[RMDB]
RNA sequence: GGGAACGACUCGAGUAGAGUCGAAAAAUCGGCCCGUUCGCGGGCCGAUACAGGCGGAGGCUCGGACCUAGCGACCGGCGCAAGGACGCACGGUACUGCGAAUUGACUGUGGAUUCGUCCACAGUAACUGAUAGCGAAAGUUCGCUUUCGCUAUCAGAAAAGAAACAACAACAACAAC
Reactivity to DMS in 0.01 (KOAc 150mM, MgCl2 10mM, bicine 150mM(pH8.5), 24C), signal-to-noise 2, nucleotides 027 to 126: a040u000c020g000g010c000c000c000g030u000u010c200g020c000g010g010g040c000c020g000a000u000a000c140a080g010g020c050g020g000a100g000g010c050u000c050g000g010a120c050c020u000a130g020c020g000a060c020c040g010g000c040g000c050a180a090g000g000a110c050g000c000a050c030g010g010u000a050c100u000g020c020g010a080a110u010u000g010a010c000u000g020u000g010g000a020u000u010c170g010u000c000c000a000c000a010g000u000a010a120
Reactivity to 2A3 in 0.01 (KOAc 150mM, MgCl2 10mM, bicine 150mM(pH8.5), 24C), signal-to-noise 2, nucleotides 027 to 126: a000u000c000g000g040c000c060c040g030u040u040c240g000c020g070g000g010c000c000g000a000u000a000c010a020g060g020c030g000g060a040g050g070c020u020c050g040g040a020c020c020u030a010g040c020g030a020c010c030g020g060c020g000c040a120a150g140g060a170c020g030c010a130c070g070g000u060a140c090u120g020c040g040a070a090u080u180g100a030c000u000g000u000g030g000a010u030u070c230g080u020c080c010a000c000a000g000u000a000a030